[RMDB]
RNA sequence: GGGAACGACUCGAGUAGAGUCGAAAAGUGGGCAUAAACCAUAUCUGGAUGGCUUAAGCUUGAAGGGAUGGUUCCGCUGUGUUCUCUUCAUGUAUGGGGAAUCCCAAAGAGGUUUACGAGAGGGAAAUCCCCACAUCAGUUUCGACUGAUGUGGGGAAAAAGAAACAACAACAACAAC
Reactivity to DMS in 0.01 (KOAc 150mM, MgCl2 10mM, bicine 150mM(pH8.5), 24C), signal-to-noise 2, nucleotides 027 to 126: g040u010g020g000g030c180a140u000a130a010a000c000c000a000u060a070u010c000u000g000g010a130u020g000g010c000u000u020a120a180g000c000u000u000g000a300a160g010g000g000a010u000g000g000u000u000c020c000g000c000u010g010u000g000u000u000c010u010c000u000u030c120a090u000g010u000a080u000g000g000g000g000a090a180u010c000c000c020a080a110a140g000a150g010g000u000u010u000a090c090g010a080g010a200g000g000g000a070a050a180
Reactivity to 2A3 in 0.01 (KOAc 150mM, MgCl2 10mM, bicine 150mM(pH8.5), 24C), signal-to-noise 1, nucleotides 027 to 126: g020u020g010g030g040c170a140u280a250a060a010c000c000a000u000a210u120c000u020g010g000a000u000g000g050c060u240u210a170a050g000c000u000u000g020a000a000g000g000g020a030u000g010g010u040u030c000c000g000c010u030g040u050g050u030u020c040u000c000u030u040c200a130u140g150u240a110u120g000g000g010g030a010a060u100c000c000c020a020a050a000g050a060g000g090u130u200u100a040c100g000a050g010a020g120g030g020a000a060a050